Conditions: 150 mM KOAc, 10 mM MgCl2 and 150 mM bicine (pH 8.5), 24 C. This 207-nucleotide RNA was probed chemically with DMS and 2A3. Values cover nucleotides 27 to 156. For 2A3, 1,035 sequencing reads were counted.

RNA sequence: GGGAACGACUCGAGUAGAGUCGAAAAUGAUCUAUGACUGCACCAAGCUUUUCCCAAUCUUAUAUAGUGAAUUUCAUAUAGGAAGCUUCAUUUUUGGGAGAAGAGUCCAAUGGUGUUAUAAAGCCCUGUUCCAAAGAUGGCAGGAAAUCAGUCAGCAAUAGUGCCUAUCAUUCGUGAUAGGCACUAUAAAAGAAACAACAACAACAAC
Reactivity to DMS in 0.01 (KOAc 150mM, MgCl2 10mM, bicine 150mM(pH8.5), 24C), signal-to-noise 1, nucleotides 027 to 156: u010g010a040u000c060u010a100u030g030a080c050u000g040c000a060c000c010a020a190g000c000u000u000u020u000c020c010c000a080a170u000c090u010u010a050u000a120u000a150g010u000g010a140a260u000u020u000c000a110u010a080u000a150g010g020a060a110g020c080u020u010c070a070u000u000u010u000u040g010g000g020a040g000a010a030g000a200g030u020c050c070a040a180u020g000g020u000g000u000u020a060u000a030a040a210g020c140c000c020u000g000u010u000c030c060a050a180a140g020a170u000g000g000c020a030g040g000a070a060a030u000c030a070g010u010c030a080g050c080a090
Reactivity to 2A3 in 0.01 (KOAc 150mM, MgCl2 10mM, bicine 150mM(pH8.5), 24C), signal-to-noise 2, nucleotides 027 to 156: u090g020a010u080c040u130a170u100g010a010c000u010g000c010a000c000c000a000a040g020c030u000u030u000u000c000c000c000a010a010u020c040u180u100a080u020a030u060a230g040u030g070a130a100u040u130u150c030a050u090a040u080a160g070g020a040a020g090c040u120u050c070a080u040u110u120u070u020g000g000g010a010g000a020a000g030a050g090u100c070c010a090a070u040g000g000u000g030u090u060a080u080a090a030a020g020c010c000c000u010g040u130u010c080c000a090a150a070g090a200u150g010g000c000a000g000g020a000a000a050u090c020a020g020u000c000a000g070c010a010